[RMDB]
RNA sequence: GGGAACGACUCGAGUAGAGUCGAAAACGCUGGCCAGCGAGAGGCCCAACCUGCGCAUCCGCACCAGUGAGAGCAAGGGCCAGGAUGGGCAGCGCACGCCCCUGGAGACCAAAUUCAACCUCGAGGAUCUAUUCCGGAAUUUCGAUUCCGGAAUAGAAAAAGAAACAACAACAACAAC
Reactivity to 2A3 in 0.01 (KOAc 150mM, MgCl2 10mM, bicine 150mM(pH8.5), 24C), signal-to-noise 2, nucleotides 027 to 126: c010g010c040u020g070g090c010c000a040g010c040g040a120g040a080g180g000c000c000c000a000a030c010c020u080g000c050g000c090a090u060c020c030g010c060a090c040c060a110g180u070g250a130g000a010g070c040a080a150g000g000g000c000c020a010g050g030a040u030g040g000g000c000a010g020c020g000c000a020c050g030c000c000c000c000u020g060g000a050g010a030c050c050a070a140a090u120u110c030a030a050c000c000u010c000g100a040g020g000a010
Reactivity to DMS in 0.01 (KOAc 150mM, MgCl2 10mM, bicine 150mM(pH8.5), 24C), signal-to-noise 2, nucleotides 027 to 126: c040g010c030u000g020g020c060c080a090g010c060g040a170g000a090g010g000c000c000c030a060a110c110c060u000g000c080g040c030a130u000c060c060g030c070a150c090c070a140g000u000g020a120g010a190g000c040a060a140g000g000g000c020c010a070g000g020a130u000g030g000g000c000a040g000c050g030c100a070c170g010c000c000c010c050u000g010g000a110g020a120c060c030a070a060a120u000u000c100a030a120c060c000u000c060g010a090g000g000a190